This 177-nucleotide RNA was probed chemically with 2A3 and DMS. It was measured as part of the RMDB library TTRDES. Values cover nucleotides 27 to 126. The DMS profile rests on 1,880 reads.

RNA sequence: GGGAACGACUCGAGUAGAGUCGAAAAGAUAUGGACAUCUCUAUUAACCUUUGAUCAACUCUCGGAAACGAGAGUUGGGAGGUUGAAUAGAGGAUGUCCUAAGUCAAAACAUCGGUUCGCCGAUGAAGCAAUACGUUUACUUCGGUAAACGUAUUGCAAAAGAAACAACAACAACAAC
Reactivity to 2A3 in 0.01 (KOAc 150mM, MgCl2 10mM, bicine 150mM(pH8.5), 24C), signal-to-noise 2, nucleotides 027 to 126: g010a030u060a040u150g020g000a010c000a030u000c020u010c020u030a020u010u050a010a010c000c000u070u280u160g150a150u190c000a010a000c010u010c000u000c000g080g000a140a080a040c010g000a000g000a010g010u000u020g010g000g000a030g050g010u040u080g210a040a020u030a010g040a070g090g040a000u000g000u000c000c000u000a040a010g030u020c040a020a040a090a130c020a000u000c000g000g070u070u080c300g000c120c000g000a000u010g000a040a020
Reactivity to DMS in 0.01 (KOAc 150mM, MgCl2 10mM, bicine 150mM(pH8.5), 24C), signal-to-noise 2, nucleotides 027 to 126: g030a040u000a300u000g010g010a010c000a010u000c000u000c000u000a000u000u000a030a000c010c000u000u000u000g020a120u030c010a000a000c010u000c000u000c000g010g000a140a090a210c010g000a020g010a000g000u000u000g000g000g000a030g000g020u000u000g000a010a000u000a040g000a030g010g010a010u000g010u000c000c000u010a010a090g030u000c060a120a110a140a270c020a020u000c000g000g000u000u040c300g030c000c000g010a010u000g010a090a100